Structure probing data (DMS) for a 177-nucleotide construct. DMS adducts were read by reverse transcription with MarathonRT. The reactions ran in a buffer of 150 mM KOAc, 10 mM MgCl2 and 150 mM bicine (pH 8.5), at 24 C.
[RMDB]
RNA sequence: GGGAACGACUCGAGUAGAGUCGAAAAGAUAUGGAGAGAAACGCUUGAUGACCGUAACAAGUAUCGGAAACGAUACCGCCCGCAAGAGCUAUCUCUCCUAAGUCAAACGAAGGCUUCGGCCUUCGAACUACCGAAGGGACUUCGGUCCCUUCGGUAGAAAAGAAACAACAACAACAAC
Reactivity to DMS in 0.01 (KOAc 150mM, MgCl2 10mM, bicine 150mM(pH8.5), 24C), signal-to-noise 1, nucleotides 027 to 126: g020a020u000a290u000g000g000a030g000a030g010a000a240a150c170g000c020u000u000g000a070u030g020a110c250c020g000u000a040a120c190a130a070g030u020a000u010c000g020g000a090a030a090c000g000a000u000a000c000c050g030c150c080c010g000c050a070a190g000a020g020c010u000a270u000c000u000c000u000c000c020u010a000a130g000u000c020a170a220a120c000g000a010a000g000g000c010u000u000c140g030g000c000c000u000u010c000g000a050a110